An RNA of 177 nucleotides, treated with DMS and read out base by base. Source: RMDB library OK2TST, as collected in RNAgym. DMS adducts were read by reverse transcription with MarathonRT. Values cover nucleotides 27 to 126. Conditions: 150 mM KOAc, 10 mM MgCl2 and 150 mM bicine (pH 8.5), 24 C.
RNA sequence: GGGAACGACUCGAGUAGAGUCGAAAAGCUGCUAUUAACCCAGGUAACUCAGGUGGCGCAUUAGUAGAUAUUAAUGGUAAUUUAGUUGGUAUUAACUCAAUGAAAAUUGCUGCGACACAAGUUGAAGUGGGAGAUUUAUGUUCGCAUAAAUCUCCCAAAAAGAAACAACAACAACAAC
Reactivity to DMS in 0.01 (KOAc 150mM, MgCl2 10mM, bicine 150mM(pH8.5), 24C), signal-to-noise 1, nucleotides 027 to 126: g000c040u040g010c030u010a060u000u010a180a060c040c040c000a180g030g010u010a060a040c090u000c130a090g030g030u000g030g000c050g010c050a100u000u000a030g000u020a110g010a070u000a130u000u000a050a020u010g000g010u000a000a040u000u010u010a280g010u000u010g000g000u000a070u010u000a030a090c150u000c020a000a020u000g000a100a080a040a080u000u000g010c080u000g000c040g010a010c040a020c020a050a020g000u000u010g010a130a170g040